This 177-nucleotide RNA was probed chemically with 2A3 and DMS. The reactions ran in a buffer of 150 mM KOAc, 10 mM MgCl2 and 150 mM bicine (pH 8.5), at 24 C. DMS adducts were read by reverse transcription with MarathonRT. For 2A3 the reverse transcriptase was SuperScript II with manganese.
RNA sequence: GGGAACGACUCGAGUAGAGUCGAAAAUUUUUGAACGAUAUAAGCAAGCCUUGGAAUCUUACCCAUUUAUUGACAUGAUGCCAGAGAUAACCCAAGGAUACAGUACUCGUUGGUUAUCGACAUUGGAGGAUGAGCUAAAUUUCGAUUUAGCUCAUCCAAAAGAAACAACAACAACAAC
Reactivity to 2A3 in 0.01 (KOAc 150mM, MgCl2 10mM, bicine 150mM(pH8.5), 24C), signal-to-noise 3, nucleotides 027 to 126: u070u070u020u020u110g060a080a010c000g000a010u020a000u030a210a010g040c060a100a010g030c020c020u030u010g010g000a040a000u010c000u010u040a060c020c000c000a030u110u120u110a230u060u160g110a030c040a090u160g020a010u090g050c020c000a000g010a010g000a060u010a050a030c000c000c020a000a000g010g000a010u040a080c070a020g030u030a060c030u010c030g080u040u050g060g010u060u020a090u030c010g080a070c040a110u080u070g030g020a030
Reactivity to DMS in 0.01 (KOAc 150mM, MgCl2 10mM, bicine 150mM(pH8.5), 24C), signal-to-noise 4, nucleotides 027 to 126: u000u000u020u010u010g010a080a030c030g010a090u000a080u010a120a110g020c070a070a140g020c040c030u020u000g000g000a110a050u000c000u000u000a160c170c160c010a070u000u000u020a170u070u000g030a120c110a130u000g000a050u000g030c040c060a160g000a140g000a020u000a030a050c110c010c010a010a020g020g000a100u000a080c120a140g010u000a070c160u000c010g000u000u000g000g020u000u000a030u000c020g000a060c180a090u000u000g000g010a300